An RNA of 177 nucleotides, treated with DMS and 2A3 and read out base by base. The RNA was probed in 150 mM KOAc, 10 mM MgCl2 and 150 mM bicine (pH 8.5) at 24 C. Source: RMDB library OK1LIB, as collected in RNAgym. 2A3 adducts were read by reverse transcription with SuperScript II with manganese.
[RMDB]
RNA sequence: GGGAACGACUCGAGUAGAGUCGAAAAUGAGGAUUAAGGGACAUCUUAGUAUUAGGUUGGGAUCUUCGCCAAGGACCCGGGAGCAGGCCCAAUAUGCUUGUACCAAUUUCCUGGACCAAUAUGGGGAUAGGACUGAAUCUUUCGAGAUUCAGUCCUAAAAAGAAACAACAACAACAAC
Reactivity to DMS in 0.01 (KOAc 150mM, MgCl2 10mM, bicine 150mM(pH8.5), 24C), signal-to-noise 2, nucleotides 027 to 126: u020g010a060g000g060a050u020u000a100a120g000g000g010a050c110a040u030c060u000u010a060g000u000a090u040u030a140g000g000u030u010g030g010g030a100u000c070u000u040c110g000c060c070a100a100g000g020a050c080c030c010g000g020g000a140g000c130a030g000g010c010c030c000a050a120u070a040u040g010c010u020u010g000u000a010c060c030a060a070u020u000u020c000c010u010g020g000a220c050c040a030a040u000a100u050g000g000g000g010a290
Reactivity to 2A3 in 0.01 (KOAc 150mM, MgCl2 10mM, bicine 150mM(pH8.5), 24C), signal-to-noise 2, nucleotides 027 to 126: u300g000a040g120g000a010u060u020a050a070g010g090g000a000c010a110u070c030u030u180a190g030u110a150u230u120a040g000g050u000u040g010g000g000a020u050c050u070u020c070g010c020c040a040a000g070g050a120c000c010c000g000g000g040a040g050c000a000g000g080c000c000c000a010a010u110a030u050g080c000u000u050g010u040a130c100c000a030a070u050u000u110c000c000u000g020g010a010c010c000a100a090u020a060u070g020g030g020g000a010